An RNA of 177 nucleotides, treated with DMS and read out base by base. Reactivities are given for positions 27 through 126. Conditions: 150 mM KOAc, 10 mM MgCl2 and 150 mM bicine (pH 8.5), 24 C. It was measured as part of the RMDB library OK2TST.
RNA sequence: GGGAACGACUCGAGUAGAGUCGAAAAAUAGUGAAGGAUCAUCAUCCUGAAGGUCUUAUUCUUACUGCGGAUACCGUUGUGGUGUAUGAAGGGAAAAUUUUCAAUAAGCCGGGUUCUUAUGAUGAGGUCUCUUCCACUAUUUCGAUAGUGGAAGAGAAAAAGAAACAACAACAACAAC
Reactivity to DMS in 0.01 (KOAc 150mM, MgCl2 10mM, bicine 150mM(pH8.5), 24C), signal-to-noise 3, nucleotides 027 to 126: a090u020a090g030u010g010a150a060g030g010a060u000c050a040u010c060a110u010c050c030u000g030a120a100g010g000u010c040u010u000a050u010u010c070u000u000a080c060u010g010c050g010g010a060u000a050c030c040g010u010u010g010u000g010g020u000g010u000a060u000g020a070a080g010g020g000a080a040a080a130u010u000u010u010c080a040a080u010a030a100g010c040c070g010g020g000u000u000c070u010u000a080u010g010a030u000g010a080g000g010